[RMDB]
RNA sequence: GGGAACGACUCGAGUAGAGUCGAAAAGACGCUUUUAGAAGAAGAGGCUAGGGGGUAUUCCGGUGUGGGAUACUUAGUAAUAUGCAACGCUAAUUGCAUAAGAUUGUAGGACGGAAUUUACAGUCUUUAGAGAUAAGCACGUUCGCGUGCUUAUCAACUCUAACCAUACGUUCGCGUAUGGUUAGAGAAAAGAAACAACAACAACAAC
Reactivity to 2A3 in 0.01 (KOAc 150mM, MgCl2 10mM, bicine 150mM(pH8.5), 24C), signal-to-noise 5, nucleotides 027 to 156: g040a010c030g010c030u030u090u070u130a080g020a150a000g010a040a010g020a040g040g030c070u070a050g030g010g040g010g000u030a040u040u030c030c020g080g050u130g050u120g070g010g000a020u020a030c010u010u050a020g030u040a040a110u020a030u110g000c000a010a030c040g050c170u100a120a040u120u010g000c000a010u010a080a020g030a050u030u090g020u040a010g040g060a010c050g030g040a040a030u100u080u050a040c010a010g010u000c000u070u070u100a130g040a000g000a070u000a000a000g020c000a000c000g000u020u040c130g020c010g080u000g000c000u000u000a000u000c000a000a010
Reactivity to DMS in 0.01 (KOAc 150mM, MgCl2 10mM, bicine 150mM(pH8.5), 24C), signal-to-noise 2, nucleotides 027 to 156: g020a050c040g030c010u000u000u000u000a060g020a130a130g010a050a120g000a130g040g030c040u000a110g000g020g030g040g000u000a060u000u010c040c020g040g050u000g050u000g020g010g000a040u000a010c090u000u000a050g020u020a070a160u010a050u000g010c010a060a060c040g030c110u000a080a180u000u000g000c000a090u010a040a070g010a060u010u000g020u000a040g020g010a160c020g010g000a040a260u000u000u010a050c040a040g020u000c010u000u010u010a120g010a190g010a030u000a010a010g030c000a010c000g010u000u000c300g000c040g070u000g000c020u000u010a000u000c000a040a080